The record gives the reactivity of an RNA of 177 nucleotides to DMS and 2A3.
[RMDB]
RNA sequence: GGGAACGACUCGAGUAGAGUCGAAAACUUUGGUGAGCCCCUAUCUAGUAUAGCAAUCCACCAAGCAGGUGAUUUCACACAAUUCAGGUUCUCAAAGAAAAUGCGCCCUGACUUGACAGGUAUGGUCCCAUUUACGCGCUUUCGAGCGCGUAAAUGGAAAAGAAACAACAACAACAAC
Reactivity to DMS in 0.01 (KOAc 150mM, MgCl2 10mM, bicine 150mM(pH8.5), 24C), signal-to-noise 1, nucleotides 027 to 126: c020u000u020u000g000g000u040g010a100g000c040c250c210c000u000a000u000c030u040a090g000u100a050u000a010g000c180a000a220u000c000c000a000c050c020a000a090g000c090a050g070g050u000g000a090u020u000u000c230a010c160a160c110a050a000u030u000c060a060g000g000u100u000c000u080c090a050a100a080g000a000a070a080a000u000g000c020g060c210c060c000u000g010a290c020u000u000g000a040c100a040g060g000u000a060u000g000g000u010c070
Reactivity to 2A3 in 0.01 (KOAc 150mM, MgCl2 10mM, bicine 150mM(pH8.5), 24C), signal-to-noise 1, nucleotides 027 to 126: c000u000u010u020g050g000u150g060a000g020c000c000c000c000u000a040u080c020u080a000g190u000a030u030a060g130c000a010a030u030c000c000a000c000c020a090a000g040c120a060g000g100u060g010a210u000u140u090c010a020c000a000c000a020a030u080u100c010a060g010g020u090u000c020u000c000a030a110a020g120a000a090a000a070u020g020c060g040c020c000c000u020g020a010c010u020u040g070a000c030a000g080g000u060a120u100g000g000u020c030
Source information:
For DMS, 823 sequencing reads were counted. Reactivities are given for positions 27 through 126. The RNA was probed in 150 mM KOAc, 10 mM MgCl2 and 150 mM bicine (pH 8.5) at 24 C. It was measured as part of the RMDB library OK1LIB. DMS adducts were read by reverse transcription with MarathonRT.